The data come from the RNA Mapping Database (RMDB), library M2RFPK. Structure probing data (2A3) for a 207-nucleotide construct. Values cover nucleotides 27 to 156. The 2A3 profile rests on 583 reads. 2A3 adducts were read by reverse transcription with SuperScript II with manganese. Values are in units of 0.01, from 0 to 300, in steps of 10.

RNA sequence: GGGAACGACUCGAGUAGAGUCGAAAAGUUGUGUAACUUCAUUUAAAUGAAUUGAAACAAAUUUAAUACAAGUGGAUGUAGGAUAACCGCCCGUCCUUUACAUUGGUAUAAAAGUGAUCUAAAAUUCGGCAGGGACGAGUCUUCGGACUCGUCCCAAGGAUAAGAAUUGAUUCGUCAAUUCUUAUCCAAAAGAAACAACAACAACAAC
Reactivity to 2A3 in 0.01 (KOAc 150mM, MgCl2 10mM, bicine 150mM(pH8.5), 24C), signal-to-noise 1, nucleotides 027 to 156: g010u040u030g000u000g060u080a040a060c040u050u050c050a120u100u090u280a180a160a050u020g020a030a030u030u070g020a110a020a000c010a010a220a020u090u160u170a080a010u060a040c010a030a020g040u030g150g000a060u070g020u080a090g010g010a080u120a130a020c020c040g040c010c050c000g010u000c000c000u030u040u000a030c000a050u070u090g070g000u120a040u020a140a100a010a000g040u050g030a010u030c030u130a120a000a040a040u070u140c030g060g020c080a040g040g000g000a000c000g000a000g030u000c000u000u060c110g040g000a000c000u000c000g010u000c020c000c010a000a000